The data come from the RNA Mapping Database (RMDB), library RNAMAK. Structure probing data (2A3 and DMS) for a 207-nucleotide construct.
RNA sequence: GGGAACGACUCGAGUAGAGUCGAAAAGCGUACUACUGCUCUAACCAGAGCCAACAGCUAUACGAAGUUCGUCCCAAAUAGGACGAACUGAGUAUAGACAUGGCUCUGAUGAAAGAGCAGUAUCGCAAACGCAAACAUGGUUCGCCAUGUUUGCGAAUCUAGGUAACUACUUCGGUAGUUACCUAGAAAAAGAAACAACAACAACAAC
Reactivity to 2A3 in 0.01 (KOAc 150mM, MgCl2 10mM, bicine 150mM(pH8.5), 24C), signal-to-noise 3, nucleotides 027 to 156: g000c010g060u120a060c060u000a000c000u020g000c010u010c010u020a060a080c030c000a010g000a000g010c010c000a090a090c060a130g060c000u000a010u000a000c010g020a020a000g010u000u000c000g010u020c010c020c000a200a300a130u300a100g000g000a000c000g000a010a000c000u000g010a000g000u000a000u000a000g000a030c010a050u020g000g000c000u000c000u000g000a010u050g040a050a120a010g000a000g000c000a000g000u000a000u010c000g000c000a070a090a000c000g000c000a000a000a010c010a000u020g010g040u080u090c160g060c080c000a000u000g000u000u000u000g010c000g000a000a010
Reactivity to DMS in 0.01 (KOAc 150mM, MgCl2 10mM, bicine 150mM(pH8.5), 24C), signal-to-noise 2, nucleotides 027 to 156: g010c000g020u020a040c060u000a000c030u020g030c010u000c000u000a270a090c040c000a020g000a000g000c020c000a020a100c130a220g000c000u000a000u000a010c000g010a300a040g010u000u000c000g020u020c000c010c030a070a220a220u010a060g000g040a040c020g000a000a000c000u000g000a300g010u000a000u000a010g010a050c040a300u010g020g000c000u000c000u010g030a030u010g010a170a300a110g010a020g020c000a010g000u020a000u000c040g020c040a120a090a150c000g000c010a010a000a000c010a050u000g000g000u010u000c300g000c020c000a010u000g080u000u000u020g010c000g020a010a010
Record summary: For 2A3 the reverse transcriptase was SuperScript II with manganese. DMS adducts were read by reverse transcription with MarathonRT.